[RMDB]
RNA sequence: GGGAACGACUCGAGUAGAGUCGAAAACGUGGAAGCAACCAGUCCUUCUUCUACAGUCCGUAUGCGCAGCUCGAUGGCUCCAUGUACGGCACUUGCUGCCUUCAACUUCAAGGAACUGGUGGUGGUGGUACUCCAUUACGUUCGCGUAAUGGAGUACAAAAGAAACAACAACAACAAC
Reactivity to DMS in 0.01 (KOAc 150mM, MgCl2 10mM, bicine 150mM(pH8.5), 24C), signal-to-noise 4, nucleotides 027 to 126: c100g030u020g010g010a090a060g020c190a170a080c010c030a020g000u010c010c010u000u000c110u010u010c050u030a050c050a070g000u000c040c080g010u030a010u010g010c080g010c110a060g030c010u010c110g010a130u030g010g010c010u010c070c060a110u020g000u010a070c140g000g000c040a020c020u000u010g000c010u000g010c010c000u040u010c120a060a080c100u010u030c190a070a010g010g000a030a060c020u000g000g000u000g010g030u000g000g030u010g010
Reactivity to 2A3 in 0.01 (KOAc 150mM, MgCl2 10mM, bicine 150mM(pH8.5), 24C), signal-to-noise 9, nucleotides 027 to 126: c100g020u100g100g040a060a010g030c040a050a090c010c010a010g050u050c000c020u040u100c010u110u030c040u080a060c050a050g030u040c070c040g080u180a040u060g080c120g020c040a010g000c010u040c080g280a270u150g110g010c030u030c030c050a130u150g070u200a070c060g000g000c020a010c010u010u070g020c030u030g000c010c000u050u060c040a080a070c020u160u100c050a020a040g070g010a190a120c010u000g020g010u020g020g050u070g000g080u090g040